[RMDB]
RNA sequence: GGGAACGACUCGAGUAGAGUCGAAAACGACAGCCAUCACAGACCAAGGUAUCGUGCCACGGCAUGUUCCACCUUGGCCAUUUGGUCACGGUCCAGAUAGUCGACCGGAUCGCCGUGCACAUAGAAAGUCAUCUCACUGCUUCGGCGGUGAGAUGGCAAAAGAAACAACAACAACAAC
Reactivity to 2A3 in 0.01 (KOAc 150mM, MgCl2 10mM, bicine 150mM(pH8.5), 24C), signal-to-noise 9, nucleotides 027 to 126: c040g060a020c020a020g030c030c000a050u070c030a040c020a050g040a030c010c000a010a010g030g000u020a020u100c050g000u000g020c030c020a030c030g000g000c010a020u060g050u040u020c020c010a010c000c000u000u000g000g000c000c000a060u060u030u130g010g000u010c020a000c080g010g010u010c000c000a020g030a090u080a030g080u070c040g000a030c000c010g020g010a020u020c020g000c000c000g000u010g010c000a000c000a010u040a010g090a010a020a000
Reactivity to DMS in 0.01 (KOAc 150mM, MgCl2 10mM, bicine 150mM(pH8.5), 24C), signal-to-noise 7, nucleotides 027 to 126: c070g010a050c080a080g000c020c020a040u020c070a080c110a080g000a070c030c020a060a020g010g000u000a080u030c070g010u000g000c130c030a050c100g000g000c000a070u020g000u020u020c090c050a060c050c040u000u000g000g000c010c020a070u000u020u010g010g000u010c030a090c060g010g010u000c020c070a100g010a090u030a060g010u020c100g000a050c060c020g010g000a050u010c090g010c000c020g010u010g010c100a020c040a120u030a110g000a070a040a030